[RMDB]
RNA sequence: GGGAACGACUCGAGUAGAGUCGAAAAGUGGCCUGGUUAACGGGCACGCACUGGGAGACUGAGAUGACAUCCCCCAGGCGCUUGGCCGCCACCGCCUUACCGUAGAUGCUGGACAUGACGGUGGUUGGAUUAAUCUUGGUUAGUUCUCUCAGCACCAGAUGUAAGGAUACUUCGGUAUCCUUACAUCAAAAGAAACAACAACAACAAC
Reactivity to 2A3 in 0.01 (KOAc 150mM, MgCl2 10mM, bicine 150mM(pH8.5), 24C), signal-to-noise 4, nucleotides 027 to 156: g050u040g010g100c010c010u060g000g090u180u160a220a050c040g000g000g010c040a020c030g030c010a030c020u020g000g010g000a040g000a030c030u040g020a000g020a060u060g020a030c040a110u050c010c010c000c080c070a010g020g000c020g010c200u150u210g120g000c000c000g000c020c000a010c000c000g020c010c000u060u180a100c020c000g030u050a070g040a300u220g080c150u230g050g030a130c050a140u200g030a020c010g000g000u020g000g000u040u230g010g000a010u030u000a000a010u050c000u010u050g030g020u120u100a050g110u240u000c030u000c000u010c000a020g010c030a040c010c020a040
Reactivity to DMS in 0.01 (KOAc 150mM, MgCl2 10mM, bicine 150mM(pH8.5), 24C), signal-to-noise 2, nucleotides 027 to 156: g020u010g030g030c010c010u040g020g010u000u000a090a130c040g030g020g040c010a040c040g020c080a110c000u010g010g010g020a040g020a070c040u020g010a080g020a070u010g000a150c180a120u000c000c000c050c000c090a080g060g030c040g040c130u010u010g020g000c000c010g020c000c010a000c030c010g010c010c000u010u010a060c020c060g020u000a130g040a120u000g050c120u030g050g000a200c110a180u010g010a030c040g020g030u000g010g020u000u000g020g000a120u010u000a260a070u000c010u020u000g020g010u010u010a130g000u000u010c000u000c010u000c010a060g000c020a090c000c030a300
Chemical mapping of a 207-nucleotide RNA with 2A3 and DMS.
The DMS profile rests on 4,146 reads.
The RNA was probed in 150 mM KOAc, 10 mM MgCl2 and 150 mM bicine (pH 8.5) at 24 C.
DMS adducts were read by reverse transcription with MarathonRT.
The 2A3 profile rests on 2,459 reads.